[RMDB]
RNA sequence: GGGAACGACUCGAGUAGAGUCGAAAAUGCGAGAAUCAUUCCAUACGGAAAUUGGCAAUGCAUACUUCCGCGAUAUGGUUGCCAAGCUAGUCGAAGAGGGCCAAUCGAUCCAGAUGGGGGUUAAUGGGUUCAGCGUGUCAUUCGUGACACGCUGAACAAAAGAAACAACAACAACAAC
Reactivity to DMS in 0.01 (KOAc 150mM, MgCl2 10mM, bicine 150mM(pH8.5), 24C), signal-to-noise 1, nucleotides 027 to 126: u000g000c060g000a130g030a160a070u000c110a100u000u010c010c030a060u060a220c210g020g020a070a120a200u000u000g010g000c000a050a000u000g050c000a020u010a030c140u000u040c120c170g010c110g020a290u000a020u000g020g000u000u000g020c060c040a010a020g060c090u000a030g010u000c000g000a050a070g000a070g000g010g000c020c020a010a040u000c050g020a070u000c020c090a100g010a250u000g000g000g020g020g000u000u000a030a080u000g020g040
Chemical mapping of a 177-nucleotide RNA with DMS. Source: RMDB library OK2TRN, as collected in RNAgym. Values cover nucleotides 27 to 126. The RNA was probed in 150 mM KOAc, 10 mM MgCl2 and 150 mM bicine (pH 8.5) at 24 C.